[RMDB]
RNA sequence: GGGAACGACUCGAGUAGAGUCGAAAAGCCUGAUCUGGAGGGCACUCCGGGCCGUAAGGAAGAAAAGCACCCAGAGGGAGGAAGCCACACAGGGGUUUGCAGAGAAAUCACCUCCAGAGGACCCCUUAAAGCCUGUUGUUCGCAACAGGCAAAAGAAACAACAACAACAAC
Reactivity to 2A3 in 0.01 (KOAc 150mM, MgCl2 10mM, bicine 150mM(pH8.5), 24C), signal-to-noise 3, nucleotides 027 to 129: g020c000c010u010g020a100u050c000u030g000g000a010g010g000g040c040a030c010u000c000c010g000g010g030c020c000g100u060a050a070g010g020a000a010g050a000a070a000a000g010c010a010c030c020c050a010g040a050g050g010g000a030g000g020a010a000g020c010c000a060c000a010c030a030g000g000g030g030u040u060u110g040c070a000g000a000g050a130a180a050u090c000a070c070c000u000c000c000a000g010a020g000g000a020c000c000c000c020u020u160a130a030a020
Reactivity to DMS in 0.01 (KOAc 150mM, MgCl2 10mM, bicine 150mM(pH8.5), 24C), signal-to-noise 4, nucleotides 027 to 129: g000c000c010u050g020a150u040c050u020g040g000a080g000g020g090c000a120c060u040c050c070g040g000g010c030c040g090u020a070a070g000g000a060a020g050a060a190a070a070g000c120a080c080c010c020a050g000a150g070g020g010a100g010g050a080a080g020c100c020a090c160a110c200a100g000g000g000g000u010u010u080g040c300a100g000a100g040a060a100a170u070c190a160c110c050u000c030c030a040g000a060g000g010a160c040c020c030c020u030u040a010a020a170
This 170-nucleotide RNA was probed chemically with 2A3 and DMS. The RNA was probed in 150 mM KOAc, 10 mM MgCl2 and 150 mM bicine (pH 8.5) at 24 C. The DMS profile rests on 7,574 reads. High 2A3 reactivity points to a flexible backbone, as in loops and unpaired stretches. For DMS the reverse transcriptase was MarathonRT.